[RMDB]
RNA sequence: GGGAACGACUCGAGUAGAGUCGAAAAUGUUUGCCCUUCGGGGCAAACAAUAGAAGCGUCACGAGCAAACGGCAAGCUCGGAAAAGGACGCAAUUGCCGAAAAUACCCUAUGUUUCGACAUAGGGAAAGCAGUUGAAGUAUUCGUACUUCAACUGCUAAAAGAAACAACAACAACAAC
Reactivity to 2A3 in 0.01 (KOAc 150mM, MgCl2 10mM, bicine 150mM(pH8.5), 24C), signal-to-noise 2, nucleotides 027 to 126: u040g000u030u000u000g010c020c020c000u000u120c280g000g000g000g000c000a010a000a010c000a010a010u180a020g110a140a040g000c010g010u030c050a040c190g010a010g020c020a120a120a110c010g020g000c030a010a030g000c000u000c000g000g000a090a200a000a040g290g010a000c010g000c010a010a130u150u100g010c000c000g020a030a010a000a040u180a080c010c000c000u010a010u010g000u010u070u110c170g040a010c000a000u000a000g000g030g000a090a000
Reactivity to DMS in 0.01 (KOAc 150mM, MgCl2 10mM, bicine 150mM(pH8.5), 24C), signal-to-noise 2, nucleotides 027 to 126: u000g020u000u000u000g010c020c000c000u020u010c180g050g000g000g000c000a010a010a010c010a060a050u000a060g000a170a190g010c000g010u010c000a140c000g040a020g010c000a040a090a050c050g010g010c020a300a160g020c010u010c010g000g000a040a050a130a210g000g000a020c020g030c010a070a030u010u000g010c000c000g000a180a060a110a080u000a160c000c000c000u000a000u000g000u010u010u000c080g020a030c000a010u020a000g010g000g000a010a000